[RMDB]
RNA sequence: GGGAACGACUCGAGUAGAGUCGAAAAAUUCCGUCCAUCCCUUCCCCCUAGUGUCGCCCAGGAAUGGCUUGGGACCCCACUCUCUGCGGGGUCCGCGUUCCAUCCUUUCUUACCUGAUGGCCGGCAUACUAGACAGAAGGUUCGCCUUCUGUCUAGUAAAAGAAACAACAACAACAAC
Reactivity to DMS in 0.01 (KOAc 150mM, MgCl2 10mM, bicine 150mM(pH8.5), 24C), signal-to-noise 2, nucleotides 027 to 126: a150u020u000c000c010g010u000c060c040a030u000c010c020c020u000u000c010c000c000c040c020u000a060g020u000g030u010c050g000c060c020c030a070g000g010a130a040u000g000g010c160u000u000g010g010g000a010c010c020c000c000a070c020u000c300u020c190u020g030c050g010g010g000g020u000c000c000g000c050g000u010u000c020c030a090u010c060c060u000u010u010c050u010u000a140c010c040u000g010a090u000g030g000c040c010g030g010c160a110u010